[RMDB]
RNA sequence: GGGAACGACUCGAGUAGAGUCGAAAAGCGCCAAAUGAAGGAGGCUCAAGCGAGCGAGAGCUCGGUGCGUUCGGCACAUGCCCACAUUCACGCACACACACACACACGCAUGGGCAGUUACUAGAAAGCUAUAUGCGCUGUUCGCAGCGCAUAUAGCAAAAGAAACAACAACAACAAC
Reactivity to 2A3 in 0.01 (KOAc 150mM, MgCl2 10mM, bicine 150mM(pH8.5), 24C), signal-to-noise 2, nucleotides 027 to 126: g040c030g080c010c010a040a160a050u280g060a090a020g120g030a010g000g050c020u030c050a100a080g050c060g000a000g000c030g010a070g010a010g060c000u010c080g020g050u000g020c050g020u050u160c040g050g050c030a010c000a140u200g000c010c010c000a040c030a030u090u110c060a030c060g000c000a010c010a010c000a000c000a000c000a000c000a050c020a020c010g010c010a010u010g010g000g000c020a060g010u030u000a040c010u000a040g160a100a050a010
Reactivity to DMS in 0.01 (KOAc 150mM, MgCl2 10mM, bicine 150mM(pH8.5), 24C), signal-to-noise 1, nucleotides 027 to 126: g010c120g000c110c000a000a000a070u000g060a300a220g000g000a220g000g000c000u000c110a090a060g010c060g000a100g000c000g000a300g090a110g090c020u000c030g000g010u000g040c000g000u000u020c100g000g000c010a000c090a060u000g020c040c100c020a040c040a040u000u010c120a220c120g000c010a000c040a080c030a030c010a000c030a000c070a120c000a080c060g010c030a010u010g010g010g040c000a100g000u040u060a210c200u010a070g000a070a030a060

Structure probing data (2A3 and DMS) for a 177-nucleotide construct. It was measured as part of the RMDB library OK1LIB. The reactions ran in a buffer of 150 mM KOAc, 10 mM MgCl2 and 150 mM bicine (pH 8.5), at 24 C. For 2A3, 903 sequencing reads were counted.